[RMDB]
RNA sequence: GGGAACGACUCGAGUAGAGUCGAAAAGCGGCGCCAGCAUCAGAAGGGCCAAAAGGAGCGCCCGGCGGAUCCGGCCGGGCGGGAAAAGAAAGCGCGUCGAUGAAAAGCCGGCUGGCCCAGGAAAGCGAAGCUACUAGCAGUUCGCUGCUAGUAGCUUAAAAGAAACAACAACAACAAC
Reactivity to DMS in 0.01 (KOAc 150mM, MgCl2 10mM, bicine 150mM(pH8.5), 24C), signal-to-noise 2, nucleotides 027 to 126: g000c050g010g020c000g040c110c060a130g000c080a050u030c110a090g000a090a120g000g000g000c000c000a050a170a300a130g000g030a300g000c060g030c030c000c000g000g050c000g030g000a160u010c110c130g000g040c000c010g070g020g020c000g010g000g000a100a010a110a150g010a060a070a140g030c030g020c060g000u010c060g010a090u000g020a010a050a160a230g010c010c000g010g030c200u030g010g010c000c000c010a180g000g010a050a070a110g010c080g030